[RMDB]
RNA sequence: GGGAACGACUCGAGUAGAGUCGAAAAUGGAUGGCUCUCCGAAGCCACCGCAUCGUUGACGAAUGGACGGCCAAGGUGCUUGCUGUCGAAGUAAAGACCAAGUCGAACCUUGUCGAGCUAGCAAGCAACGGAUUAUCAUAUUCGUAUGAUAAUCCGUAAAAGAAACAACAACAACAAC
Reactivity to DMS in 0.01 (KOAc 150mM, MgCl2 10mM, bicine 150mM(pH8.5), 24C), signal-to-noise 9, nucleotides 027 to 126: u030g000g000a090u010g000g000c000u000c050u050c200c140g010a120a040g000c010c000a020c020c000g010c140a060u030c100g010u010u030g010a080c100g000a120a070u020g000g010a100c040g000g020c060c040a100a070g000g010u000g000c010u000u010g000c090u020g000u010c050g000a080a080g010u030a060a110a100g000a050c090c040a080a080g000u000c080g000a100a090c120c020u000u010g000u010c020g000a080g020c030u010a050g010c070a060a040g010c060a140
Reactivity to 2A3 in 0.01 (KOAc 150mM, MgCl2 10mM, bicine 150mM(pH8.5), 24C), signal-to-noise 9, nucleotides 027 to 126: u140g020g080a050u010g010g000c010u010c020u010c100c090g090a080a000g000c000c000a000c010c000g050c020a140u140c080g080u050u110g060a090c050g070a110a110u100g020g020a010c010g020g000c050c050a050a040g060g010u030g010c000u010u010g010c030u070g020u080c030g020a090a020g070u220a080a070a030g010a020c020c020a030a010g020u040c060g050a050a050c010c000u020u030g050u050c020g010a050g020c020u040a010g040c020a060a000g000c010a030